Structure probing data (2A3 and DMS) for a 177-nucleotide construct. The DMS profile rests on 4,094 reads.
RNA sequence: GGGAACGACUCGAGUAGAGUCGAAAAUCUGAAGAGUUCGCUCUUCAGAAAAUACCGAGAGUGAACCUCGGUAGAGUUGACUAACCCUUGGAAACAAGGGAAAAACGGAAUGGUUCGCCAUUCCGAAGGUAGAAAUGUAGUUCGCUACAUUUCUACCAAAAGAAACAACAACAACAAC
Reactivity to 2A3 in 0.01 (KOAc 150mM, MgCl2 10mM, bicine 150mM(pH8.5), 24C), signal-to-noise 2, nucleotides 027 to 126: u000c000u010g010a000a000g010a010g030u080u100c160g070c060u000c000u000u010c000a000g010a000a030a010a010u020a010c000c010g000a000g000a000g060u240g110a130a140c000c010u000c010g030g010u010a000g010a010g040u110u300g100a070c060u050a070a110c000c000c010u010u010g020g020a030a030a020c010a000a000g020g020g010a110a020a010a000a020c010g020g000a000a000u010g020g020u050u030c180g010c060c000a010u000u000c000c000g020a040a020
Reactivity to DMS in 0.01 (KOAc 150mM, MgCl2 10mM, bicine 150mM(pH8.5), 24C), signal-to-noise 4, nucleotides 027 to 126: u010c000u000g000a010a010g030a010g020u000u010c300g040c000u000c000u000u000c010a010g000a020a070a070a120u000a010c000c010g000a000g010a070g010u000g000a170a150c150c000u000c010g010g010u000a010g010a150g000u000u000g010a150c170u000a050a110c000c000c000u020u000g000g000a200a110a210c010a010a000g010g000g000a020a020a030a110a140c010g010g010a010a010u000g000g010u010u010c240g020c000c000a010u000u000c000c000g010a010a010
The RNA was probed in 150 mM KOAc, 10 mM MgCl2 and 150 mM bicine (pH 8.5) at 24 C.